[RMDB]
RNA sequence: GGGAACGACUCGAGUAGAGUCGAAAAACGAGUCCGUACGCGGACUCGAAGGGCCCCAGAACACCAAGGGGCCCAAACCUACCACUCAUUAGAUGCAUGGAAAUCACUAGGUGAUACGUCACCUAGAACACGCUUUUAAGCUUCGGCUUAAAAGCAACCUCUUACCUCACUUCGGUGAGGUAAGAGGAAAAGAAACAACAACAACAAC
Reactivity to 2A3 in 0.01 (KOAc 150mM, MgCl2 10mM, bicine 150mM(pH8.5), 24C), signal-to-noise 1, nucleotides 027 to 156: a000c000g000a000g000u000c000c000g010u010a020c260g020c040g100g000a000c000u030c000g010a000a000g010g000g010c000c000c000c000a070g050a270a010c050a080c120c040a100a100g020g000g020g080c030c000c020a000a030a000c000c000u060a080c010c000a090c050u050c030a090u000u150a050g010a160u140g020c120a090u060g010g120a040a050a000u140c010a080c060u000a000g030g010u000g000a010u060a140c230g060u010c020a030c020c000u000a020g000a010a020c110a000c120g030c000u000u000u000u000a010a000g000c000u000u160c260g120g000c000u000u000a000a000a000a020g010c000a000a000

Structure probing data (2A3) for a 207-nucleotide construct.
The RNA was probed in 150 mM KOAc, 10 mM MgCl2 and 150 mM bicine (pH 8.5) at 24 C.
For 2A3 the reverse transcriptase was SuperScript II with manganese.